[RMDB]
RNA sequence: GGGAACGACUCGAGUAGAGUCGAAAACUGCAGAUGGAGAUCAUCAAACUCCUGCAACCUGAUCAUGUUACCGAUGAGGAUCUGAUGAAGACAGACUGGCAGCCUUGCAUAAAACAAGUGGGCACUCGAUCUUUCCAGUUUUCGAACUGGAAAGAUCAAAAGAAACAACAACAACAAC
Reactivity to DMS in 0.01 (KOAc 150mM, MgCl2 10mM, bicine 150mM(pH8.5), 24C), signal-to-noise 2, nucleotides 027 to 126: c180u010g020c020a060g010a130u010g030g020a020g000a110u000c130a050u000c170a090a110a110c030u000c010c040u000g010c080a050a110c060c030u000g000a050u010c080a040u010g000u000u010a090c100c050g000a090u010g010a110g010g010a080u000c080u000g010a040u000g000a050a080g010a080c100a030g000a080c040u000g000g000c050a080g010c050c020u000u000g000c060a050u010a050a060a070a030c110a030a050g000u000g000g000g020c050a050c150u000c110
Reactivity to 2A3 in 0.01 (KOAc 150mM, MgCl2 10mM, bicine 150mM(pH8.5), 24C), signal-to-noise 3, nucleotides 027 to 126: c060u020g010c000a020g020a190u170g060g010a050g010a090u080c030a030u050c030a150a040a190c020u020c000c010u020g040c040a020a030c000c020u030g040a040u040c040a050u100g100u150u120a120c070c090g020a060u150g050a030g020g030a000u000c020u060g040a070u060g020a020a010g080a040c020a020g080a070c010u040g040g000c020a030g030c010c020u070u100g000c050a070u160a140a130a040a050c040a130a000g030u050g020g040g000c030a030c070u060c090
The record gives the reactivity of an RNA of 177 nucleotides to DMS and 2A3. It was measured as part of the RMDB library OK2TRN. The 2A3 profile rests on 2,763 reads. Reactivities are given for positions 27 through 126.